[RMDB]
RNA sequence: GGGAACGACUCGAGUAGAGUCGAAAAGAUAUGGAUCCACUGCGGGAGAUCCUCACAUCGGAAACGAUGUACGCGAGGAUCGAGGAUCGCAGGUGGAUCCUAAGUCAAAGUCGCCUUCGGGCGACAAUCAUGUUGAGCACUUCGGUGCUCAACAUGAAAAAGAAACAACAACAACAAC
Reactivity to DMS in 0.01 (KOAc 150mM, MgCl2 10mM, bicine 150mM(pH8.5), 24C), signal-to-noise 1, nucleotides 027 to 126: g010a050u020a300u000g000g020a030u000c000c000a000c020u000g010c020g000g010g000a020g000a000u000c000c000u000c000a070c010a000u000c000g020g000a200a110a220c010g010a020u020g020u000a110c300g090c300g000a000g020g000a010u000c000g010a060g000g000a030u020c030g030c050a100g000g010u000g040g020a040u000c010c000u010a000a110g000u000c050a140a180a130g000u000c000g000c000c000u000u000c250g000g010g040c010g000a000c000a020a090
Chemical mapping of a 177-nucleotide RNA with DMS. The reactions ran in a buffer of 150 mM KOAc, 10 mM MgCl2 and 150 mM bicine (pH 8.5), at 24 C. Source: RMDB library TTRDES, as collected in RNAgym. Values are in units of 0.01, from 0 to 300, in steps of 10.